[RMDB]
RNA sequence: GGGAACGACUCGAGUAGAGUCGAAAAAGGGCUGGAUUCGUCCAGCCCUGCACAUUCGUACCCAACGAAGCGUACGUCAUUACGCAAAUGACGUAAAGCGUAGAACCACGGACUUCGGUCCGUGGAAACAUACUUGGCUAUUCGUAGCCAAGUAUGUAAAAGAAACAACAACAACAAC
Reactivity to DMS in 0.01 (KOAc 150mM, MgCl2 10mM, bicine 150mM(pH8.5), 24C), signal-to-noise 9, nucleotides 027 to 126: a010g010g000g010c000u000g000g000a020u000u010c200g020u000c000c000a010g010c000c000c000u000g000c170a080c210a180u000u000c030g010u000a110c010c010c000a160a090c030g010a050a120g010c060g000u000a010c000g000u000c000a010u000u000a080c300g010c270a080a010a010u000g000a020c000g000u000a010a030a110g020c020g010u010a100g010a140a220c010c000a000c000g000g000a020c000u000u010c170g020g000u000c000c000g010u000g000g000a010a040
Reactivity to 2A3 in 0.01 (KOAc 150mM, MgCl2 10mM, bicine 150mM(pH8.5), 24C), signal-to-noise 6, nucleotides 027 to 126: a000g010g010g000c000u010g000g000a020u030u050c160g050u020c050c000a000g010c000c000c000u000g000c000a020c000a150u090u080c020g010u030a080c010c000c010a020a020c020g030a080a020g020c010g030u030a010c000g000u000c010a010u030u050a080c100g010c220a090a040a000u010g010a000c010g000u030a100a090a040g020c020g030u050a040g040a090a040c000c000a000c000g000g000a010c000u050u090c270g080g000u000c000c000g000u000g000g000a000a000